[RMDB]
RNA sequence: GGGAACGACUCGAGUAGAGUCGAAAAUCACAGGUGUACCUCUACGAUUCUUCGAAUCGCGAAGCGUUGCUAGUGCGAUAAUUGGGAUUACUACUAUACUGCAGUAUUUUCCUCUCCACAGUUAACCCGAGUGAGCGCGAUUCGUCGCGCUCACUCGAAAAGAAACAACAACAACAAC
Reactivity to 2A3 in 0.01 (KOAc 150mM, MgCl2 10mM, bicine 150mM(pH8.5), 24C), signal-to-noise 1, nucleotides 027 to 126: u030c000a000c010a070g000g000u030g000u080a010c000c000u110c000u000a090c050g000a020u080u080c000u070u050c070g040a130a080u000c000g000c120g230a110a070g000c090g070u070u150g020c020u000a120g020u030g000c000g000a000u000a070a060u020u020g000g000g000a010u000u080a000c140u120a050c000u000a000u030a170c000u000g140c020a040g000u120a100u000u020u100u160c000c000u070c010u000c000c000a050c000a000g030u040u050a070a040c000c070